[RMDB]
RNA sequence: GGGAACGACUCGAGUAGAGUCGAAAAGUGUAACAGGAAGAAAGUUGCAGCAUAUACGCGGUGAAUUAUUCGGUGUCAUAGGAGUAGAGUCUUUUGGUAAGAUGCUGAUAAUGAGUAGGGGAGAUGAAUACCAAAGACGAUUCGUCGUCUUUGGUAUAAAAGAAACAACAACAACAAC
Reactivity to 2A3 in 0.01 (KOAc 150mM, MgCl2 10mM, bicine 150mM(pH8.5), 24C), signal-to-noise 9, nucleotides 027 to 126: g060u030g030u050a070a040c040a050g070g120a080a080g050a070a160a040g040u050u060g030c010a020g020c040a050u080a010u020a130c050g010c020g070g030u080g060a080a060u130u050a050u110u190c030g030g000u030g030u030c040a070u080a140g020g040a030g040u060a030g040a010g110u060c020u040u070u060u080g060g000u040a070a040g020a040u050g000c020u020g040a050u040a110a100u120g040a010g050u070a050g000g010g020g000a040g000a030u080g060a050
Reactivity to DMS in 0.01 (KOAc 150mM, MgCl2 10mM, bicine 150mM(pH8.5), 24C), signal-to-noise 9, nucleotides 027 to 126: g010u010g010u010a060a060c070a070g010g010a090a070g010a080a110a090g000u000u010g010c030a050g010c090a070u020a090u010a080c130g010c050g010g010u010g000a060a070u010u020a070u020u010c050g010g010u010g010u000c050a070u020a060g000g010a050g010u020a080g000a120g010u010c020u000u000u010u020g000g010u010a050a070g000a040u000g000c030u000g010a060u020a050a060u010g000a080g020u000a060g010g000g010g010a090g000a070u010g010a110